Background: This 177-nucleotide RNA was probed chemically with DMS and 2A3. The RNA was probed in 150 mM KOAc, 10 mM MgCl2 and 150 mM bicine (pH 8.5) at 24 C. 2A3 adducts were read by reverse transcription with SuperScript II with manganese. Reactivities are given for positions 27 through 126. For DMS the reverse transcriptase was MarathonRT. For 2A3, 2,107 sequencing reads were counted. Source: RMDB library TTRDEL, as collected in RNAgym.
RNA sequence: GGGAACGACUCGAGUAGAGUCGAAAAGAUAUGGAAUGAGUACCCAGCGACGACGUCGGAAACGACAUCAGCUGGUACCAUUCCUAAGUCAAACCAGCCUGAAGAGCUUCGGCUCUUCAGGCUGGAACUACACUGACCUGUUCGCAGGUCAGUGUAGAAAAGAAACAACAACAACAAC
Reactivity to DMS in 0.01 (KOAc 150mM, MgCl2 10mM, bicine 150mM(pH8.5), 24C), signal-to-noise 1, nucleotides 027 to 126: g000a020u000a300u010g000g000a020a020u000g000a110g020u000a030c190c040c020a010g010c000g010a060c260g010a000c050g040u000c000g000g000a080a110a160c020g020a000c000a010u000c000a180g000c010u000g020g000u000a000c000c000a020u000u000c000c000u000a000a060g010u000c010a060a110a110c000c000a030g020c020c000u000g000a030a000g010a000g000c000u000u000c240g030g010c000u000c000u000u000c000a000g000g000c000u020g000g030a010a100
Reactivity to 2A3 in 0.01 (KOAc 150mM, MgCl2 10mM, bicine 150mM(pH8.5), 24C), signal-to-noise 1, nucleotides 027 to 126: g010a010u050a050u160g000g010a010a000u020g010a030g120u010a030c100c100c030a040g060c010g060a150c130g010a060c030g000u000c000g070g000a070a050a040c000g020a000c010a010u020c020a040g000c010u000g030g010u020a000c000c000a010u000u000c000c000u010a090a000g020u000c000a000a070a090c010c000a040g010c020c020u060g050a030a020g050a030g000c000u180u270c300g280g000c000u050c000u000u000c010a000g000g000c010u000g000g050a000a000